Source information:
An RNA of 177 nucleotides, treated with 2A3 and DMS and read out base by base.

RNA sequence: GGGAACGACUCGAGUAGAGUCGAAAAGCGGCCAGGUUGUCCGGCAGGCGGCCCUGGCUGCCAGGCUUCUGCAGGACAUGGAACUCCACGCCCUUGCCGGCGAAGCGUUCGAUCAGCUCGCCGAGGAGACGUAAUAGCGAUUCGUCGCUAUUACGUCAAAAGAAACAACAACAACAAC
Reactivity to 2A3 in 0.01 (KOAc 150mM, MgCl2 10mM, bicine 150mM(pH8.5), 24C), signal-to-noise 3, nucleotides 027 to 126: g010c010g010g000c000c010a000g050g000u170u130g090u170c030c000g070g120c110a060g140g120c030g020g000c030c020c000u010g000g000c010u000g010c000c000a030g030g010c010u050u040c010u130g020c030a030g020g050a050c000a060u170g000g030a060a040c030u020c010c020a030c050g010c010c000c000u020u110g050c020c030g000g000c020g020a090a010g030c010g030u090u170c060g080a300u110c070a040g010c000u000c000g000c000c010g020a080g050g030a110
Reactivity to DMS in 0.01 (KOAc 150mM, MgCl2 10mM, bicine 150mM(pH8.5), 24C), signal-to-noise 4, nucleotides 027 to 126: g000c020g030g010c000c020a040g010g010u010u000g000u020c010c040g000g020c190a100g000g000c110g000g000c040c010c020u000g000g010c020u010g010c020c050a060g000g010c040u000u010c020u010g000c010a030g000g000a060c040a040u010g010g000a080a070c100u000c020c030a050c030g010c030c000c020u000u000g030c070c020g000g000c010g010a040a060g010c050g020u000u010c240g010a110u000c080a140g010c010u000c020g010c000c000g000a140g000g000a180